[RMDB]
RNA sequence: GGGAACGACUCGAGUAGAGUCGAAAAUGGUGGUCUCUGGCAAAUUGGUCCGUAAUUGGGCUCGGUGGGUGCCUGCGUUUGCCACAGGUUGCCUGGGUGGGUCCCAUAGCGGGUGGGUGCCUGGUGGCGAUAUAUUUAUUUUCGAAUAAAUAUAUCGAAAAGAAACAACAACAACAAC
Reactivity to 2A3 in 0.01 (KOAc 150mM, MgCl2 10mM, bicine 150mM(pH8.5), 24C), signal-to-noise 1, nucleotides 027 to 126: u060g010g000u010g030g010u010c030u000c010u050g000g000c000a010a050a090u160u260g080g000u000c000c000g030u090a000a270u050u300g000g000g000c000u000c020g000g070u080g000g020g040u110g010c000c010u040g020c020g000u000u050u080g030c020c000a010c020a010g020g010u070u090g040c000c000u030g040g020g120u210g030g010g000u090c000c010c010a000u010a020g040c020g010g020g080u150g020g030g010u030g010c000c030u040g070g030u050g020g040
This 177-nucleotide RNA was probed chemically with 2A3. For 2A3 the reverse transcriptase was SuperScript II with manganese. Values cover nucleotides 27 to 126. The data come from the RNA Mapping Database (RMDB), library OK1LIB. The RNA was probed in 150 mM KOAc, 10 mM MgCl2 and 150 mM bicine (pH 8.5) at 24 C. The 2A3 profile rests on 1,389 reads.